[RMDB]
Chemical mapping of a 177-nucleotide RNA with DMS.
The RNA was probed in 150 mM KOAc, 10 mM MgCl2 and 150 mM bicine (pH 8.5) at 24 C.
RNA sequence: GGGAACGACUCGAGUAGAGUCGAAAACGACCUCGUCGGACUCCGGGUCCUCGUCCUCGUCGUCCGCAUCCUCUUCGUCCUCGUCGUCCGACGAGGACGAGGACGACGACGGCAACGACGCGGCCGAAUACGGGUAGAUCUUCGGAUCUACCCGUAUAAAAGAAACAACAACAACAAC
Reactivity to DMS in 0.01 (KOAc 150mM, MgCl2 10mM, bicine 150mM(pH8.5), 24C), signal-to-noise 1, nucleotides 027 to 126: c090g010a080c030c000u000c050g000u010c020g010g010a160c100u000c080c070g020g000g020u000c000c020u000c120g000u010c010c060u000c010g000u000c010g010u010c060c020g050c140a100u000c020c030u030c040u010u000c030g000u000c000c010u010c020g000u000c010g020u010c300c160g000a020c040g020a000g010g000a000c020g000a000g010g030a010c080g010a040c030g010a080c110g060g000c050a060a080c060g000a040c010g040c090g000g010c020c020g010a140

For DMS the reverse transcriptase was MarathonRT.